[RMDB]
RNA sequence: GGGAACGACUCGAGUAGAGUCGAAAAGCCGAACAUUAUGGUCAGAUUGCGGUACAUGCUGAGAGUGAAACGGUUUAUCACUAUGAUGGCGAGCGCUGGGGCAAGCUGCCCGAUGGUGUGUUACGGCCUGAGUAUGCACCUUCGGGUGCAUACUCAGAAAAGAAACAACAACAACAAC
Reactivity to DMS in 0.01 (KOAc 150mM, MgCl2 10mM, bicine 150mM(pH8.5), 24C), signal-to-noise 1, nucleotides 027 to 126: g060c020c020g050a110a050c030a020u010u010a050u010g030g020u000c050a030g010a040u050u000g070c000g020g050u010a150c020a080u010g000c010u020g030a110g010a030g010u010g030a070a030a080c200g020g040u010u010u000a150u010c040a010c040u000a070u030g020a170u000g020g000c070g000a040g050c050g030c050u000g060g020g030g000c020a040a070g010c060u000g000c040c010c010g010a070u000g000g030u020g010u010g000u000u000a080c010g000g000c020